[RMDB]
RNA sequence: GGGAACGACUCGAGUAGAGUCGAAAACGAGAUUCGGUGAGGUCCCGUAGCUCCCCGCCACCGAGAAACCGUCGAUGAGCUUCGAGAACGUCGCCUGCAGGACGUCAAACUGCCGAGCCAUCAACGGCAGUCUAUUCCCGAGUGCGGCUGGGAACUCCCCCUGUAACAUGUUCGCAUGUUACAGGGGAAAAGAAACAACAACAACAAC
Reactivity to DMS in 0.01 (KOAc 150mM, MgCl2 10mM, bicine 150mM(pH8.5), 24C), signal-to-noise 1, nucleotides 027 to 156: c010g020a110g020a070u010u020c000g040g000u000g000a130g070g000u000c000c000c000g000u000a100g040c040u000c020c030c010c030g020c020c000a020c000c040g030a130g020a070a090a080c030c020g000u010c000g010a040u010g000a290g020c040u000u000c020g000a250g020a050a060c010g020u010c010g000c060c030u000g020c170a160g000g010a030c020g010u010c030a030a150a040c010u020g000c090c020g020a090g070c000c060a020u000c020a080a050c000g010g020c000a060g010u000c070u020a240u010u000c040c010c030g000a070g050u010g020c040g020g070c000u000g020g000g000a090a060c020u020c050
Reactivity to 2A3 in 0.01 (KOAc 150mM, MgCl2 10mM, bicine 150mM(pH8.5), 24C), signal-to-noise 2, nucleotides 027 to 156: c050g030a020g020a110u100u090c010g030g010u060g040a070g000g090u040c060c080c040g030u070a030g060c040u040c000c010c010c010g000c040c000a010c000c010g000a010g030a040a040a050c000c000g010u020c040g010a030u050g010a010g050c000u150u130c050g050a060g000a020a010c010g010u010c010g110c090c060u120g040c060a100g040g070a020c010g050u040c030a010a110a140c010u030g170c120c000g000a000g040c040c010a050u050c010a020a000c000g020g040c000a000g000u000c000u060a090u060u030c030c000c000g010a020g030u080g020c030g030g000c040u100g030g000g030a020a040c020u000c020
Conditions: 150 mM KOAc, 10 mM MgCl2 and 150 mM bicine (pH 8.5), 24 C. This 207-nucleotide RNA was probed chemically with DMS and 2A3. For DMS the reverse transcriptase was MarathonRT. Values are in units of 0.01, from 0 to 300, in steps of 10.